[RMDB]
RNA sequence: GGGAACGACUCGAGUAGAGUCGAAAAGAUAUGGAUCCCUGAUGAGAGGCUGGACUAUCAAUCACAGGCUCGGAAACGAGCCUGUGAUUGCCGAGGUCCAGAACUACCUUCGCAGGGAUCCUAAGUCGAUAGACUUAACCUUCGGGUUAAGUCUAUCAAAAGAAACAACAACAACAAC
Reactivity to DMS in 0.01 (KOAc 150mM, MgCl2 10mM, bicine 150mM(pH8.5), 24C), signal-to-noise 2, nucleotides 027 to 126: g000a090u000a220u020g000g000a000u010c000c000c000u000g000a130u000g000a110g030a000g000g000c020u000g000g020a030c010u000a140u010c040a030a020u000c020a010c000a020g020g030c000u000c010g010g010a050a030a160c000g000a020g010c000c000u000g010u000g000a000u000u000g000c300c220g010a190g000g010u010c000c020a010g000a020a030c060u020a300c010c000u010u000c040g010c000a020g020g000g000a000u000c000c000u000a000a050g010u000c050